[RMDB]
RNA sequence: GGGAACGACUCGAGUAGAGUCGAAAACGACAAUCAAGGGAUAUGAAGGUAUCUUUGCGAGAACAACAAGUGAGGAUAAGCUUACGUUCCAGACUGUUGAUGCACUUCAAUUACUACCUGUAUUUGAUGACUACGGUACAUUACAACGGAUUAUUAGUAGGGCUUUGAGAUUCGUCUCAAAGCCCUAAAAAGAAACAACAACAACAAC
Reactivity to 2A3 in 0.01 (KOAc 150mM, MgCl2 10mM, bicine 150mM(pH8.5), 24C), signal-to-noise 1, nucleotides 027 to 156: c020g030a040c050a020a050u090c030a070a140g120g000g060a020u030a010u140g000a100a010g030g060u000a000u020c000u000u300u130g000c090g100a090g040a150a020c010a020a000c040a140a000g040u000g000a000g050g050a070u070a140a040g010c000u000u000a020c030g000u010u000c000c000a140g010a170c110u080g000u040u000g070a080u090g000c130a140c130u010u010c000a000a090u020u020a000c000u070a100c000c000u080g030u020a150u000u090u100g030a080u130g020a050c000u000a000c070g000g070u000a010c000a010u140u100a020c130a130a000c000g050g020a030u060u140a000u300u160a270g120